[RMDB]
RNA sequence: GGGAACGACUCGAGUAGAGUCGAAAAGGUACGGCCGGCCCGGCCCGGCCAUCGUACAUCUCGCGAGCUGAUCCGACACACACGAUCAGUAGCGUGUGUGGUACGACGCAGUGUGUGCGCGACGGCCGACGGCAUACACGUUCGCGUGUAUGCCGUCAAAAGAAACAACAACAACAAC
Reactivity to DMS in 0.01 (KOAc 150mM, MgCl2 10mM, bicine 150mM(pH8.5), 24C), signal-to-noise 2, nucleotides 027 to 126: g050g000u000a060c100g020g030c010c030g000g000c050c070c070g010g000c070c000c080g020g000c010c090a010u010c050g020u000a030c000a080u010c050u000c000g000c020g030a170g030c000u020g010a090u000c030c030g010a260c020a040c030a000c040a010c040g000a090u010c100a090g050u000a090g020c010g020u010g040u020g040u000g000g000u020a250c190g000a050c100g000c030a070g030u000g000u010g000u000g010c020g000c060g010a040c020g000g000c020c020
Reactivity to 2A3 in 0.01 (KOAc 150mM, MgCl2 10mM, bicine 150mM(pH8.5), 24C), signal-to-noise 2, nucleotides 027 to 126: g020g060u050a040c070g020g000c030c000g030g010c040c140c000g080g020c010c000c000g050g000c030c010a030u080c030g000u020a020c000a090u030c050u010c080g020c000g070a100g020c040u070g050a230u030c040c030g050a040c020a010c000a010c000a000c030g030a110u140c100a110g150u140a060g060c010g000u010g000u020g010u010g060g050u080a040c030g000a000c060g000c040a040g000u000g030u030g040u040g090c010g000c000g050a070c010g010g030c000c000
Chemical mapping of a 177-nucleotide RNA with DMS and 2A3. Conditions: 150 mM KOAc, 10 mM MgCl2 and 150 mM bicine (pH 8.5), 24 C. The data come from the RNA Mapping Database (RMDB), library OK2TRN.